[RMDB]
RNA sequence: GGGAACGACUCGAGUAGAGUCGAAAAGCGUUGGAGAGUCCUGGUAAAGUGCACCCGGAGAGGUCCAAUAGUCUUCCAAACAAGGCGAUGAAUCCACCCGUAUGGAACUGAUCAAUUUCACGCAUCGCGCACAGGUGCUGUUCGCAGCACCUGUGCGAAAAGAAACAACAACAACAAC
Reactivity to 2A3 in 0.01 (KOAc 150mM, MgCl2 10mM, bicine 150mM(pH8.5), 24C), signal-to-noise 1, nucleotides 027 to 126: g060c030g000u030u080g000g000a030g000a040g130u130c060c040u010g000g000u010a000a000a270g190u090g080c070a010c030c020c030g130g010a070g000a070g100g090u000c000c000a000a000u080a030g080u000c000u040u040c090c000a060a160a060c190a140a020g010g000c000g000a000u100g040a000a140u010c030c000a020c020c040c020g010u060a210u030g010g010a020a000c020u040g040a000u270c180a030a030u030u150u040c040a030c040g170c040a030u060c030g040
Annotation: The data come from the RNA Mapping Database (RMDB), library OK1LIB. This 177-nucleotide RNA was probed chemically with 2A3. For 2A3, 302 sequencing reads were counted. The RNA was probed in 150 mM KOAc, 10 mM MgCl2 and 150 mM bicine (pH 8.5) at 24 C.